An RNA of 177 nucleotides, treated with 2A3 and read out base by base.

RNA sequence: GGGAACGACUCGAGUAGAGUCGAAAAGGCAACUGCCGGGCUUGCCGACCGGGCAUCAAGCGGCCGGUUGUGGGCCAACCUGUGCGAUCGGCAGGUGCACCACGACCCCGGGCACCGGGGUGACCUCCAGUCUACCGCGUUUCGACGCGGUAGACUGAAAAGAAACAACAACAACAAC
Reactivity to 2A3 in 0.01 (KOAc 150mM, MgCl2 10mM, bicine 150mM(pH8.5), 24C), signal-to-noise 1, nucleotides 027 to 126: g110g000c000a070a020c070u010g010c030c000g070g000g000c020u000u010g040c070c000g040a090c000c010g010g040g070c030a150u150c060a080a090g110c030g040g010c040c040g010g000u030u010g070u110g030g000g000c000c000a000a050c060c020u140g090u120g170c140g150a140u110c040g060g010c000a000g020g010u030g020c120a090c070c000a020c020g090a070c000c020c000c000g050g000g170c030a150c160c000g000g000g000g070u000g030a090c000c090u060c050
About this RNA: It was measured as part of the RMDB library OK1LIB.